[RMDB]
RNA sequence: GGGAACGACUCGAGUAGAGUCGAAAAUAAGCAAGCCGUCCACAGACCAUCCAGUAUCACGACGAUACUUGCGACCUUGCGGAUCGACAUAGAAGUUCUUCGUGCGCCGCAGCAGAACAUAAUGCCAGAAACAUUAUCUUUUCGAAGAUAAUGUUUCAAAAGAAACAACAACAACAAC
Reactivity to 2A3 in 0.01 (KOAc 150mM, MgCl2 10mM, bicine 150mM(pH8.5), 24C), signal-to-noise 8, nucleotides 027 to 126: u120a030a010g030c010a030a010g020c030c010g030u010c020c020a080c030a050g070a040c040c000a050u060c020c020a030g030u050a040u100c030a020c140g160a020c050g000a060u050a090c000u010u050g020c020g030a060c010c010u020u060g000c040g010g030a140u170c040g130a150c040a020u120a120g060a080a020g110u170u070c040u070u040c050g030u020g020c030g010c020c020g000c010a010g000c010a010g030a040a010c020a050u240a170a040u150g080c040c020a020
Reactivity to DMS in 0.01 (KOAc 150mM, MgCl2 10mM, bicine 150mM(pH8.5), 24C), signal-to-noise 9, nucleotides 027 to 126: u010a120a180g010c040a050a060g020c060c030g020u000c010c070a100c170a100g000a070c040c060a100u010c100c090a070g010u000a030u000c040a120c190g010a070c120g010a060u000a020c010u000u000g010c050g010a090c080c040u000u000g010c040g000g000a070u000c030g010a110c030a050u000a070g020a050a070g020u000u000c090u010u000c040g010u000g000c060g000c030c040g010c020a050g020c090a070g000a070a070c080a070u010a060a050u000g010c070c170a170